[RMDB]
RNA sequence: GGGAACGACUCGAGUAGAGUCGAAAAAGCUCCUGUUUCGACAGGAGCUGUGUCGCUGCCCUUUUGUGCUCGAUGUAGAGUGCUUUCCUGCCGGAAAGGGCUUGAGAGCUUGAUUCGUCAAGCUCAAUCCUGUAGAACGGUUCGCCGUUCUACAGGAAAAAGAAACAACAACAACAAC
Reactivity to DMS in 0.01 (KOAc 150mM, MgCl2 10mM, bicine 150mM(pH8.5), 24C), signal-to-noise 3, nucleotides 027 to 126: a010g010c000u000c000c000u010g010u000u000u010c190g000a040c000a000g010g000a000g010c000u000g000u000g020u010c060g050c150u010g000c010c010c020u000u000u000u000g010u000g010c010u000c010g010a170u020g010u000a140g000a010g020u000g000c010u000u000u000c010c010u000g020c160c120g000g000a020a040a030g000g010g020c030u000u000g010a150g000a010g000c000u010u000g000a030u000u010c230g010u000c000a010a010g000c000u000c000a050a080
Reactivity to 2A3 in 0.01 (KOAc 150mM, MgCl2 10mM, bicine 150mM(pH8.5), 24C), signal-to-noise 1, nucleotides 027 to 126: a000g010c000u000c020c000u000g000u000u090u040c160g120a010c000a010g010g000a000g000c000u000g010u020g050u050c040g060c160u060g000c040c010c000u050u110u000u050g030u010g000c020u000c000g100a130u300g050u130a070g010a000g020u000g000c000u060u020u030c010c000u080g220c000c060g020g030a000a010a020g040g020g040c000u060u130g090a110g000a010g020c000u000u000g010a020u040u090c180g030u010c110a010a010g000c000u000c000a000a030
Source: RMDB library M2PK50, as collected in RNAgym.
An RNA of 177 nucleotides, treated with DMS and 2A3 and read out base by base.
For 2A3 the reverse transcriptase was SuperScript II with manganese.
For DMS, 4,122 sequencing reads were counted.